An RNA of 177 nucleotides, treated with 2A3 and read out base by base. Source: RMDB library RFM100, as collected in RNAgym.

[RMDB]
RNA sequence: GGGAACGACUCGAGUAGAGUCGAAAAGCUGCUCGCAGAUAAUGCGGGUAAUCCGCAGACGAUCCUCAUGGGUAAGUAGAUUGAGGUAAUUAUGCGCCAGCUCGUUACUGAGAAUAUUCGUGCCGUCCCCUAGCUCCCACUUCGGUGGGAGCUAGGGAAAAGAAACAACAACAACAAC
Reactivity to 2A3 in 0.01 (KOAc 150mM, MgCl2 10mM, bicine 150mM(pH8.5), 24C), signal-to-noise 1, nucleotides 027 to 126: g000c000u000g000c000u000c000g000c000a000g000a040u100a300a000u100g000c000g000g000g000u000a000a280u000c000c000g000c050a000g050a150c040g050a080u060c040c000u010c050a040u230g000g000g230u300a100a000g180u190a150g050a080u050u050g000a060g000g060u110a000a050u040u060a000u100g000c000g020c030c000a000g000c000u020c000g130u130u000a000c100u000g080a000g080a160a000u080a000u000u000c000g000u040g000c000c010g040u060c000
The reactions ran in a buffer of 150 mM KOAc, 10 mM MgCl2 and 150 mM bicine (pH 8.5), at 24 C.